Structure probing data (DMS and 2A3) for a 177-nucleotide construct. For DMS, 2,017 sequencing reads were counted.
[RMDB]
RNA sequence: GGGAACGACUCGAGUAGAGUCGAAAAGAUAUGGAGCCAUGACCCGCUCCGAUGAGGCAUCGAUCCAAAUCGCUUCGGAAACGAAGCGAUUUGGGGAGCCUCAAAGGAGCGCAUGGCUCCUAAGUCACCUAUUACUGAUCUUCGGAUCAGUAAUAGGAAAAGAAACAACAACAACAAC
Reactivity to DMS in 0.01 (KOAc 150mM, MgCl2 10mM, bicine 150mM(pH8.5), 24C), signal-to-noise 2, nucleotides 027 to 126: g000a050u000a300u000g000g000a020g020c000c000a000u010g000a220c290c220c170g010c000u000c000c000g000a300u000g000a020g010g020c000a300u000c200g020a040u010c000c000a000a020a010u020c000g010c000u000u010c000g000g000a140a160a290c000g030a010a000g010c000g000a000u000u000u000g020g000g000g020a000g040c000c010u000c010a000a000a290g000g000a020g000c000g000c050a010u000g000g010c000u000c000c000u000a010a030g030u000c070a300
Reactivity to 2A3 in 0.01 (KOAc 150mM, MgCl2 10mM, bicine 150mM(pH8.5), 24C), signal-to-noise 2, nucleotides 027 to 126: g010a000u080a040u230g020g000a010g000c010c010a020u040g070a300c060c070c110g000c010u010c000c000g000a030u040g010a010g040g000c020a220u300c200g040a040u000c020c000a040a000a010u000c000g000c000u000u000c030g080g000a100a070a060c020g000a020a000g010c000g000a010u000u000u020g010g000g010g010a000g030c040c010u000c000a010a000a000g010g000a010g020c010g000c000a000u010g000g000c010u030c000c000u000a000a000g000u000c010a030
2A3 adducts were read by reverse transcription with SuperScript II with manganese.